Structure probing data (2A3 and DMS) for a 177-nucleotide construct. Reactivities are given for positions 27 through 126. The reactions ran in a buffer of 150 mM KOAc, 10 mM MgCl2 and 150 mM bicine (pH 8.5), at 24 C. The 2A3 profile rests on 4,918 reads. For 2A3 the reverse transcriptase was SuperScript II with manganese.

[RMDB]
RNA sequence: GGGAACGACUCGAGUAGAGUCGAAAACGGGCAAAUCAAGCACAGCCCGGCUAACUGGACUGGGGCGCCACCACCCGGCGCAGCUGCCGAGCGUAUAGCCACUCGAUCACCGGCAUGCCCGCGGUGAAACUUUAAGAUCGUUCGCGAUCUUAAAGUUAAAAGAAACAACAACAACAAC
Reactivity to 2A3 in 0.01 (KOAc 150mM, MgCl2 10mM, bicine 150mM(pH8.5), 24C), signal-to-noise 3, nucleotides 027 to 126: c030g000g000g000c040a080a060a200u140c070a280a080g030c030a040c040a070g000c000c000c000g000g000c000u040a080a040c020u040g010g180a060c020u040g010g000g020g040c050g040c000c020a040c020c010a060c000c010c000g030g010c050g000c010a010g020c010u060g000c020c010g020a020g020c030g010u110a040u090a160g060c030c010a070c040u070c040g090a110u030c000a000c030c000g000g020c040a010u040g010c010c020c000g010c000g000g020u010g010a050
Reactivity to DMS in 0.01 (KOAc 150mM, MgCl2 10mM, bicine 150mM(pH8.5), 24C), signal-to-noise 4, nucleotides 027 to 126: c040g000g000g020c010a060a140a140u000c200a100a140g010c050a090c150a150g010c000c010c010g010g020c030u010a050a090c050u000g000g000a030c020u000g010g000g010g000c050g010c030c020a050c080c050a100c040c020c030g000g020c060g010c020a030g010c060u000g010c030c010g010a030g000c020g000u010a090u010a090g010c030c030a080c110u010c080g020a200u000c010a040c040c000g000g000c050a080u010g000c000c010c010g020c030g000g010u000g000a040